[RMDB]
RNA sequence: GGGAACGACUCGAGUAGAGUCGAAAAUUAUACAAGAGAAGAAAACCAAAAGGCACAGUUGGACUACAAUGUAGCCCUUGUCUAAUGUCAAAGGCGACAAGUACUGAUGAUAUUAUUUGGGACCAACUAUGUCGGUAGACUUCGGUCUACCGACAUAAAAAGAAACAACAACAACAAC
Reactivity to DMS in 0.01 (KOAc 150mM, MgCl2 10mM, bicine 150mM(pH8.5), 24C), signal-to-noise 2, nucleotides 027 to 126: u050u020a100u050a060c120a130a090g010a140g000a100a070g000a050a130a060a300c060c060a090a080a020a070g000g030c000a040c300a010g030u000u010g000g000a300c060u000a140c110a080a130u140g020u000a110g050c000c000c030u000u000g010u030c050u030a020a040u000g000u010c030a010a090a090g000g040c050g000a050c170a070a060g050u100a120c040u000g010a190u020g000a020u010a020u000u000a150u000u020u000g000g010g000a220c000c010a000a030c070
Reactivity to 2A3 in 0.01 (KOAc 150mM, MgCl2 10mM, bicine 150mM(pH8.5), 24C), signal-to-noise 2, nucleotides 027 to 126: u080u020a110u020a030c130a000a070g060a040g100a210a000g090a000a060a010a010c070c000a050a160a000a050g040g010c000a020c030a090g000u000u080g040g020a080c000u080a000c070a140a210u200g000u060a040g000c010c000c000u000u000g000u000c100u030a000a060u140g030u020c010a020a000a080g030g030c000g060a120c140a140a000g000u030a250c000u000g140a120u060g000a000u040a040u020u090a030u010u140u080g000g000g000a000c000c000a000a000c000
Chemical mapping of a 177-nucleotide RNA with DMS and 2A3. The reactions ran in a buffer of 150 mM KOAc, 10 mM MgCl2 and 150 mM bicine (pH 8.5), at 24 C. It was measured as part of the RMDB library OK1LIB.